[RMDB]
RNA sequence: GGGAACGACUCGAGUAGAGUCGAAAACAAAGCCGCUUCGGCGGCUUUGAAAGAUGCAUUUUACGCCAAGUAAUCCCGGAACAUUGGCCCGUUAGCGGGAGAAAACCUAUGCGUUCGCGCAUAGGAAGACAAAUGUUUACUUCGGUAAACAUUUGUCAAAAGAAACAACAACAACAAC
Reactivity to DMS in 0.01 (KOAc 150mM, MgCl2 10mM, bicine 150mM(pH8.5), 24C), signal-to-noise 2, nucleotides 027 to 126: c010a010a000a000g010c000c000g010c020u000u000c180g060g020c000g020g000c000u000u000u010g020a100a050a170g000a080u000g000c070a110u010u030u000u020a070c090g020c050c090a050a090g010u000a070a120u000c010c010c000g030g020a040a050c070a110u010u010g010g000c030c000c020g000u000u000a040g020c010g000g000g010a060g000a040a060a130a130c010c000u000a010u000g000c000g000u000u010c250g020c010g020c000a000u000a000g000g000a060a030
Reactivity to 2A3 in 0.01 (KOAc 150mM, MgCl2 10mM, bicine 150mM(pH8.5), 24C), signal-to-noise 1, nucleotides 027 to 126: c000a000a000a000g010c000c000g060c000u050u060c100g150g000c020g000g000c000u000u030u000g000a000a000a000g060a020u120g020c020a000u000u110u100u300a100c090g000c040c060a030a070g020u050a140a100u030c000c000c000g030g050a090a050c090a120u060u110g090g020c000c000c060g060u040u090a090g070c030g060g010g000a020g090a040a110a020a040c010c000u020a000u000g010c010g020u050u040c270g000c000g000c060a000u000a000g020g010a000a010